[RMDB]
RNA sequence: GGGAACGACUCGAGUAGAGUCGAAAAGGGACCAGGGGUGCUUGUUCACAGGCUGAGAAAGUCCCUUUGAACCUGAACAGGGUAAUGCCUGCGCAGGGAGUGUCACAGUCACACGUUCGCGUGUGACCAUUAUCCACUCGUUCGCGAGUGGAUAAUGAAAAGAAACAACAACAACAAC
Reactivity to 2A3 in 0.01 (KOAc 150mM, MgCl2 10mM, bicine 150mM(pH8.5), 24C), signal-to-noise 4, nucleotides 027 to 126: g030g010g010a010c040c050a060g030g030g030g010u110g030c020u060u040g030u100u040c100a110c010a240g060g000c020u020g010a010g090a210a170a020g020u030c010c000c000u010u050u020g010a010a000c000c000u000g010a060a020c000a010g000g000g030u040a020a020u100g080c000c000u010g000c030g000c030a010g000g060g010a050g070u170g060u060c040a030c040a140g010u010c000a000c000a000c010g020u050u070c230g010c010g070u000g010u000g000a000c000
Reactivity to DMS in 0.01 (KOAc 150mM, MgCl2 10mM, bicine 150mM(pH8.5), 24C), signal-to-noise 8, nucleotides 027 to 126: g010g010g010a020c010c050a150g010g010g010g020u000g000c020u000u000g010u010u010c240a110c020a060g000g000c030u010g010a150g000a090a180a140g010u010c000c000c000u000u000u000g000a110a140c000c000u000g000a050a050c010a010g000g000g000u010a110a080u010g000c000c000u000g010c300g010c020a010g000g000g000a100g010u010g000u000c080a070c150a140g000u000c000a000c000a000c000g010u000u010c190g010c020g010u000g010u000g010a000c000
An RNA of 177 nucleotides, treated with 2A3 and DMS and read out base by base. Values are in units of 0.01, from 0 to 300, in steps of 10.